[RMDB]
RNA sequence: GGGAACGACUCGAGUAGAGUCGAAAAGAUUCCCAGUCCUUCGCCCUCGCUGCCUAAUAAGCAGUGAGUGAGGGACCCUUAAUGGGUGUCAGCCCGGGAGUGUUCCCGACCCGGACCCUGGCAUAAUCUAGGGGACUAAACCAUCGAGCCCGGUCACCUACAUAACUUAGUUCGCUAAGUUAUGUAGAAAAGAAACAACAACAACAAC
Reactivity to DMS in 0.01 (KOAc 150mM, MgCl2 10mM, bicine 150mM(pH8.5), 24C), signal-to-noise 2, nucleotides 027 to 156: g000a130u000u000c000c000c010a090g020u000c000c010u010u000c020g020c010c030c030u000c050g000c000u000g000c010c020u000a170a210u020a100a010g000c000a010g010u000g030a030g000u010g010a060g000g020g000a020c000c050c020u010u010a050a120u000g000g010g060u000g010u010c020a090g000c030c010c010g020g000g000a060g020u000g000u000u000c000c020c000g010a190c040c000c000g040g020a080c000c030c060u030g000g000c010a080u000a110a080u000c060u000a120g000g010g020g010a290c060u000a020a100a060c040c010a110u000c030g010a110g020c000c010c030g000g000u000c060a150c090
Reactivity to 2A3 in 0.01 (KOAc 150mM, MgCl2 10mM, bicine 150mM(pH8.5), 24C), signal-to-noise 5, nucleotides 027 to 156: g060a140u040u030c000c000c000a000g010u020c000c000u020u000c020g050c050c070c010u010c000g000c000u000g000c000c000u110a160a070u270a160a010g000c000a000g000u000g010a000g000u020g000a010g000g000g000a010c010c000c000u110u240a160a140u160g060g030g010u030g030u020c010a010g030c000c000c000g010g000g000a040g030u090g020u010u000c010c000c000g020a040c020c000c000g020g010a030c060c010c000u010g010g000c030a080u080a150a070u150c090u120a060g000g010g010g010a010c050u090a070a070a090c030c010a040u090c080g040a030g020c000c020c000g020g020u040c030a050c020
About this RNA:
Chemical mapping of a 207-nucleotide RNA with DMS and 2A3. Source: RMDB library RSTRND, as collected in RNAgym. The 2A3 profile rests on 5,487 reads.